[RMDB]
RNA sequence: GGGAACGACUCGAGUAGAGUCGAAAAUCGGCGCGGCCGGCCGCCGCCUCACGUAUCUGAUCGCGGUCGUCGCGUCGGCGGCGGCGGGCGUGUGGUUCGCGCUGCAAGCCCUCGAUCCGCAGCAGUACGAUAUGAUCGAUUUCGAUCGAUCAUAUCGAAAAGAAACAACAACAACAAC
Reactivity to 2A3 in 0.01 (KOAc 150mM, MgCl2 10mM, bicine 150mM(pH8.5), 24C), signal-to-noise 3, nucleotides 027 to 126: u070c010g020g010c000g000c000g070g050c030c020g120g040c010c020g000c010c020g020c000c020u070c010a070c040g100u120a090u070c100u200g040a060u080c050g010c060g120g030u110c050g060u080c100g000c000g010u020c020g000g000c010g000g030c010g000g020c020g010g020g000c010g000u030g010u030g030g050u080u190c010g000c010g000c010u020g010c020a050a040g040c000c020c000u030c050g040a110u010c010c030g010c020a030g010c030a020g100u090a060
Reactivity to DMS in 0.01 (KOAc 150mM, MgCl2 10mM, bicine 150mM(pH8.5), 24C), signal-to-noise 4, nucleotides 027 to 126: u010c010g010g010c000g020c030g000g030c010c020g010g010c010c000g040c000c020g020c030c020u010c120a050c060g020u000a070u010c100u010g010a030u010c090g030c140g020g010u000c080g010u000c110g000c010g020u000c180g000g010c100g010g010c030g010g000c030g000g000g020c020g030u010g030u010g010g020u010u010c070g010c070g010c000u000g000c120a090a130g010c010c000c000u000c070g000a080u000c030c040g010c030a080g010c100a110g010u010a160